[RMDB]
Chemical mapping of a 177-nucleotide RNA with 2A3 and DMS.

RNA sequence: GGGAACGACUCGAGUAGAGUCGAAAAGAUAUGGAAGACAAAGUCGACGAGGAUCCAUUUUUGCGUAUCUCCUUCGGAAACGAAGGAGGAUACGCAAAAAUGGGGAGUCGUCGUGUCUUCCUAAGUCCCUAUUUUUAUAGUUCGCUAUAAAAAUAGGAAAAGAAACAACAACAACAAC
Reactivity to 2A3 in 0.01 (KOAc 150mM, MgCl2 10mM, bicine 150mM(pH8.5), 24C), signal-to-noise 2, nucleotides 027 to 126: g060a020u160a070u220g030g000a000a010g000a000c030a120a300a120g280u210c030g010a020c010g020a200g090g030a030u050c000c010a030u010u000u010u000u020g030c000g000u000a030u040c020u000c010c000u030u020c040g060g050a150a120a110c020g000a000a010g000g020a000g030g000a000u000a000c020g000c010a020a010a020a000a000u020g000g010g000g020a010g140u000c000g000u010c000g010u000g000u020c000u010u030c000c000u000a080a040g040u000c000
Reactivity to DMS in 0.01 (KOAc 150mM, MgCl2 10mM, bicine 150mM(pH8.5), 24C), signal-to-noise 4, nucleotides 027 to 126: g000a100u010a260u010g000g010a030a010g010a000c000a090a180a260g020u010c020g020a010c000g010a050g010g020a300u030c000c000a000u000u010u010u000u000g010c000g000u000a010u000c000u000c000c010u000u010c010g010g010a110a080a220c010g040a010a000g010g020a020g010g010a000u000a000c000g030c000a000a000a000a000a000u000g000g000g010g000a300g000u000c000g010u000c010g020u000g000u000c000u000u000c000c000u000a030a080g000u000c020